[RMDB]
RNA sequence: GGGAACGACUCGAGUAGAGUCGAAAAAGAUCAGUGUUCGCACUGAUCUAAAAAACCUUUGUGUCUGCCAAGCUUUGAUCUCCCGAGGCCCAUUGGGCCUCGUGGAGGGAGCUUGAUCAGACACUCUGGUAAAAAGGAUAGGGUUCGCCCUAUCCAAUGCUUGUAACUGAUUCGUCAGUUACAAGCAAAAAGAAACAACAACAACAAC
Reactivity to 2A3 in 0.01 (KOAc 150mM, MgCl2 10mM, bicine 150mM(pH8.5), 24C), signal-to-noise 1, nucleotides 027 to 156: a000g020a000u010c000a020g000u040g060u010u170c180g050c070a020c000u000g000a020u000c000u020a000a000a000a000a000a000c000c000u000u010u000g000u000g000u000c000u010g020c000c000a030a030g000c020u220u150u090g080a080u060c000u000c000c020c000g000a010g010g000c040c050c070a200u290u300g000g000g000c050c030u020c010g040u300g020g000a000g000g000g000a000g010c010u000u010g020a060u040c000a000g000a000c000a000c000u020c010u000g020g020u060a110a010a110a100a010g000g010a010u030a000g020g030g030u030u040c210g150c010c000c000u000a000u000c030c000a000a010